This 177-nucleotide RNA was probed chemically with DMS and 2A3.
[RMDB]
RNA sequence: GGGAACGACUCGAGUAGAGUCGAAAAUUGAGUCCAUUCACAGGUCGUGAUAUGAUUCAAUUAGCUUCCGACUCAUUCAUCCAAAUACCGAGUCGCCAAAAUUCAAACUAGACUCGUUAAAUGAAUGCAAAUGCAGAGUAUUCGUACUCUGCAUUUGAAAAGAAACAACAACAACAAC
Reactivity to DMS in 0.01 (KOAc 150mM, MgCl2 10mM, bicine 150mM(pH8.5), 24C), signal-to-noise 9, nucleotides 027 to 126: u000u000g000a010g010u000c000c060a220u000u000c000a000c000a200g020g010u040c200g000u000g010a000u000a150u020g000a010u000u000c000a000a010u000u000a150g010c230u010u000c080c010g010a060c050u010c010a140u020u020c150a090u020c160c160a100a080a230u010a040c070c000g000a010g000u000c010g010c090c090a050a040a060a060u020u040c130a060a080a090c150u010a080g010a060c060u010c070g010u000u020a040a080a090u010g000a050a030u010g010
Reactivity to 2A3 in 0.01 (KOAc 150mM, MgCl2 10mM, bicine 150mM(pH8.5), 24C), signal-to-noise 9, nucleotides 027 to 126: u000u000g000a000g000u000c040c010a010u010u000c010a000c020a040g200g300u230c140g030u040g000a000u010a020u220g010a000u000u000c000a000a000u020u020a030g060c070u080u010c060c020g030a030c010u000c020a060u200u050c030a060u060c070c090a120a100a030u110a050c020c010g000a000g010u010c000g000c010c010a080a070a020a010u150u140c070a070a040a030c050u090a050g070a110c020u030c090g060u080u070a100a160a030u090g040a030a030u070g030
For DMS the reverse transcriptase was MarathonRT.